[RMDB]
RNA sequence: GGGAACGACUCGAGUAGAGUCGAAAACACUCACGAUUCGUCGUGAGUGAAAGAACGCCAAAGUGACGCAAUCUACCGCGUCAGGAAGGCGAAACGAGGUAAAAACCGGGUCCUUCGGGACCCGGAACAUUGGUAUAAUGUUCGCAUUAUACCAAUGAAAAGAAACAACAACAACAAC
Reactivity to 2A3 in 0.01 (KOAc 150mM, MgCl2 10mM, bicine 150mM(pH8.5), 24C), signal-to-noise 8, nucleotides 027 to 126: c000a000c000u010c000a000c000g030a020u060u070c180g040u000c000g000u140g000a000g000u000g000a000a000a000g010a110a020c010g000c000c010a090a080a010g130u010g010a000c000g000c000a020a070u050c040u170a130c060c110g000c000g000u000c000a000g010g020a060a040g010g010c030g000a020a020a000c050g040a060g050g110u160a080a080a040a040a040c000c000g000g000g000u000c010c000u040u070c160g050g000g000a000c000c000c000g000g000a000a000
Reactivity to DMS in 0.01 (KOAc 150mM, MgCl2 10mM, bicine 150mM(pH8.5), 24C), signal-to-noise 9, nucleotides 027 to 126: c000a010c000u000c000a000c000g010a020u000u020c210g020u000c000g030u000g010a010g020u000g000a030a060a080g010a120a220c020g020c000c000a030a120a300g010u000g000a020c000g010c010a090a090u010c180u010a100c250c140g010c000g000u000c000a010g000g010a300a160g000g000c010g000a030a080a050c110g010a100g010g010u010a050a060a070a120a110c000c000g000g000g010u000c000c000u000u010c190g020g000g000a010c000c000c000g000g000a010a020
Structure probing data (2A3 and DMS) for a 177-nucleotide construct. Values cover nucleotides 27 to 126. The DMS profile rests on 20,705 reads. Source: RMDB library M2PK50, as collected in RNAgym. The 2A3 profile rests on 26,406 reads. Conditions: 150 mM KOAc, 10 mM MgCl2 and 150 mM bicine (pH 8.5), 24 C.